Chemical mapping of a 177-nucleotide RNA with 2A3 and DMS. For DMS, 2,330 sequencing reads were counted. Conditions: 150 mM KOAc, 10 mM MgCl2 and 150 mM bicine (pH 8.5), 24 C.

RNA sequence: GGGAACGACUCGAGUAGAGUCGAAAAGGUUCGCACUUCGGUGCGAACCAAAGGCUAAGCAAUAAAUAUCAGCUAGUUCGCUAAGCCACUAACGAGCAGAAAAAACCGUUUGGUUCGCCAAACGGAAUCUUCUUAAUUUCUUCGGAAAUUAAGAAGAAAAAGAAACAACAACAACAAC
Reactivity to 2A3 in 0.01 (KOAc 150mM, MgCl2 10mM, bicine 150mM(pH8.5), 24C), signal-to-noise 2, nucleotides 027 to 126: g010g020u030u000c010g010c000a000c020u020u110c300g090g000u000g000c000g000a010a000c000c000a000a010a000g000g000c010u060a050a020g030c000a070a130u130a220a190a070u270a180u230c030a010g100c060u110a040g100u040u030c040g000c010u030a040a000g010c000c030a060c020u060a060a010c080g100a030g070c070a100g220a110a140a020a020a020a060c000c010g000u000u000u000g020g010u040u060c220g000c040c000a000a000a010c000g010g000a000a000
Reactivity to DMS in 0.01 (KOAc 150mM, MgCl2 10mM, bicine 150mM(pH8.5), 24C), signal-to-noise 3, nucleotides 027 to 126: g030g010u000u000c000g010c010a000c020u010u010c160g020g030u000g010c010g010a000a000c000c010a000a030a060g000g000c040u000a060a070g010c030a080a040u000a040a110a140u020a090u020c120a090g020c110u000a170g010u000u000c080g010c000u000a070a050g010c010c020a110c120u000a050a070c110g010a060g000c070a090g010a000a090a070a120a100a090c000c020g000u000u000u000g000g000u010u030c150g000c000c000a000a010a000c010g000g010a020a040